[RMDB]
RNA sequence: GGGAACGACUCGAGUAGAGUCGAAAACGCCGGAUAAUGCAUAAAAACAAAUGGUUAGAGCAGCUUCGGCGAUUCUGUUAAAACAGAAACCGCUCUAAUUGUUGUUUGGAAAGGAAUGGAAUGAGCAUAUUAAUCGGCUAUUCGUAGCCGAUUAAUAAAAAGAAACAACAACAACAAC
Reactivity to DMS in 0.01 (KOAc 150mM, MgCl2 10mM, bicine 150mM(pH8.5), 24C), signal-to-noise 3, nucleotides 027 to 126: c100g050c040c040g010g020a050u030a120a080u000g030c050a070u000a080a050a040a030a020c030a090a040a030u000g030g010u000u000a010g000a020g030c010a160g010c120u000u010c090g020g020c030g010a130u000u000c030u010g000u000u010a050a080a130a190c000a010g000a020a040a130c170c110g030c000u000c010u000a020a010u000u010g010u000u000g000u000u000u000g000g020a060a100a110g000g000a060a100u010g010g010a090a050u000g020a090g010c110a150
Structure probing data (DMS) for a 177-nucleotide construct. For DMS, 1,793 sequencing reads were counted. For DMS the reverse transcriptase was MarathonRT.